[RMDB]
RNA sequence: GGGAACGACUCGAGUAGAGUCGAAAAAUACCUUUCGAGGUAUCUAGAUAUGGACGACGGCCAACCAGCGGAUCGAGGACUCUCGGAAACGAGAGUCUCCCCACCGAUCCGAACUACUGGUACCGUCGUCCUAAGUCAAACUGAGGUUUCGACCUCACGAAGGUUAUAGCUUCGGCUAUAACCUUCGAAAAGAAACAACAACAACAAC
Reactivity to 2A3 in 0.01 (KOAc 150mM, MgCl2 10mM, bicine 150mM(pH8.5), 24C), signal-to-noise 1, nucleotides 027 to 156: a000u010a000c000c000u010u120u080c230g070a060g000g030u010a110u180c140u130a080g000a010u010a000u040g000g000a000c000g000a000c010g060g000c130c170a110a020c010c010a020g020c020g030g000a010u000c000g000a010g000g010a010c000u000c000u010c000g000g000a000a000a000c000g000a000g000a010g000u000c010u030c080c000c000c000a000c000c000g000a000u000c010c000g000a020a010c090u300a010c000u060g000g010u000a020c010c000g020u000c020g010u030c000c000u000a000a000g000u020c000a000a060a030c090u040g000a000g000g010u020u090u210c160g100a090c010c000u000c010a010